[RMDB]
RNA sequence: GGGAACGACUCGAGUAGAGUCGAAAAAAAGAAGUCUAUUGCCAGCAGCACUCCUCUCUACCUGUUACCAGUGACACUGUUAAAGAUGAGGACAUGAGAGUUGACAGGUGUAUCAUUAUACACACUGCAAGUGUGGUGAGUUCGCUCACCACACUUGAAAAGAAACAACAACAACAAC
Reactivity to DMS in 0.01 (KOAc 150mM, MgCl2 10mM, bicine 150mM(pH8.5), 24C), signal-to-noise 4, nucleotides 027 to 126: a050a040a070g010a080a070g000u000c040u000a080u010u000g010c010c020a050g010c050a070g000c080a090c130u000c020c020u010c030u000c050u000a090c090c040u000g020u000u000a050c100c090a060g010u000g020a090c080a200c060u000g000u000u000a040a060a020g000a060u020g010a090g000g020a070c130a040u000g000a070g010a060g010u000u010g010a140c030a040g000g000u000g010u000a020u000c180a090u010u000a110u000a020c050a030c030a080c050u000g000
Reactivity to 2A3 in 0.01 (KOAc 150mM, MgCl2 10mM, bicine 150mM(pH8.5), 24C), signal-to-noise 2, nucleotides 027 to 126: a000a000a000g190a040a000g070u000c000u090a080u100u080g060c110c030a010g110c030a020g010c010a050c030u030c000c020u070c000u060c020u040a070c010c000u040g040u060u090a100c010c030a050g000u010g140a080c070a050c080u000g040u070u080a140a040a010g030a080u190g020a030g030g060a030c010a040u120g030a070g010a000g020u050u220g070a020c000a000g030g010u020g000u000a010u010c000a020u040u270a020u020a030c010a020c050a040c050u080g000